An RNA of 177 nucleotides, treated with DMS and read out base by base.

[RMDB]
RNA sequence: GGGAACGACUCGAGUAGAGUCGAAAAGAUAUGGACAGUAUAGAACUGCAGGCUUCCGAUAAGAUGUGGUCGGAAACGACCAAACAUCUUUUGACGGAAGUCUGCAGUUCUAUACUGUCCUAAGUCAGUAUUAAAUACAGUUCGCUGUAUUUAAUACAAAAGAAACAACAACAACAAC
Reactivity to DMS in 0.01 (KOAc 150mM, MgCl2 10mM, bicine 150mM(pH8.5), 24C), signal-to-noise 2, nucleotides 027 to 126: g020a030u000a300u010g000g000a010c000a010g000u010a010u010a000g030a000a010c000u010g030c000a020g010g010c010u000u000c000c000g020a170u010a010a010g000a010u010g050u000g010g010u000c010g000g000a140a080a210c010g000a010c000c010a040a140a070c010a000u010c000u000u000u010u010g000a190c240g000g020a020a020g020u020c000u000g000c000a000g020u000u000c000u000a000u000a000c000u000g000u000c000c010u000a000a070g010u010c050a170